[RMDB]
RNA sequence: GGGAACGACUCGAGUAGAGUCGAAAACGCACUAGCAGCUUAAGGGCUGCUUAGGACGGCACAAAUUGCCUUUGGUUUGGUUGCUCUCCUAGAUGCGAAUGCACAAAGGAUAGCCAAAAUUAGCGUUGCGAUGAUUUUGGCGAAAUUCUUAGCAAAUUAUAAUGGUUUUCUUCGGAAAACCAUUAUAAAAAGAAACAACAACAACAAC
Reactivity to 2A3 in 0.01 (KOAc 150mM, MgCl2 10mM, bicine 150mM(pH8.5), 24C), signal-to-noise 2, nucleotides 027 to 156: c000g030c000a000c010u020a000g000c000a010g000c010u120u130a160a190g230g010g000c010u000g000c000u000u000a000g000g000a000c000g010g050c020a010c000a000a010a000u000u010g010c010c000u020u000u000g000g050u020u000u000g030g000u070u050g010c010u030c010u010c040c010u030a160g020a190u010g000c010g020a120a070u300g080c150a010c010a020a000a000g000g000a000u000a000g000c000c000a000a010a010a000u000u000a020g070c010g050u020u000g020c000g020a000u000g000a010u000u020u000u010g000g000c030g000a010a000a010u190u010c060u060u170a030g010c000a020a020a020u030
Reactivity to DMS in 0.01 (KOAc 150mM, MgCl2 10mM, bicine 150mM(pH8.5), 24C), signal-to-noise 1, nucleotides 027 to 156: c040g010c030a030c010u000a050g020c010a010g010c000u010u000a100a150g040g030g040c000u000g030c000u000u000a010g000g020a060c040g020g070c000a040c020a000a020a020u000u000g000c030c000u000u010u000g000g000u000u000u000g010g020u000u000g020c010u000c110u000c000c010u010a110g000a080u000g000c000g000a090a190u010g000c130a010c050a060a000a030g000g010a060u000a260g030c010c000a000a000a000a000u000u000a070g020c040g000u000u010g080c050g010a130u010g000a020u000u000u000u000g000g000c010g010a080a030a100u010u000c010u020u010a150g010c040a050a060a210u000